[RMDB]
RNA sequence: GGGAACGACUCGAGUAGAGUCGAAAACUGUGGACGGCGUGCUUAAACUGAGCCUCGAUUCAAUUAAACCUAGCGUUGGAGAACGCAAAUAUGUCAGCAUCUAACUUCACCGUCGAUCAGAUCGAAGCGUAACGAGAGGAUUCGUCCUCUCGUUACGAAAAGAAACAACAACAACAAC
Reactivity to DMS in 0.01 (KOAc 150mM, MgCl2 10mM, bicine 150mM(pH8.5), 24C), signal-to-noise 4, nucleotides 027 to 126: c050u000g020u010g020g010a070c050g050g000c110g050u000g000c050u010u000a050a050a150c100u000g000a120g000c040c030u000c060g000a110u000u020c080a060a110u000u010a070a070a140c080c030u010a110g020c030g010u000u000g010g030a110g010a030a040c030g020c020a070a060a080u000a050u000g000u000c030a020g000c020a060u010c100u000a070a040c040u000u000c040a050c020c020g010u000c040g010a080u020c060a040g010a300u000c040g000a070a070g000
Reactivity to 2A3 in 0.01 (KOAc 150mM, MgCl2 10mM, bicine 150mM(pH8.5), 24C), signal-to-noise 4, nucleotides 027 to 126: c020u020g030u060g090g030a000c000g030g010c040g020u050g000c020u100u110a150a130a060c040u050g030a000g010c040c000u020c060g060a080u110u040c050a070a080u130u150a170a110a080c070c070u050a040g000c010g010u020u060g130g050a100g030a050a000c010g000c010a000a070a040u240a040u090g050u040c020a020g030c010a050u020c030u080a010a110c020u060u040c040a040c050c020g060u040c010g000a090u060c030a060g040a110u030c030g040a040a000g080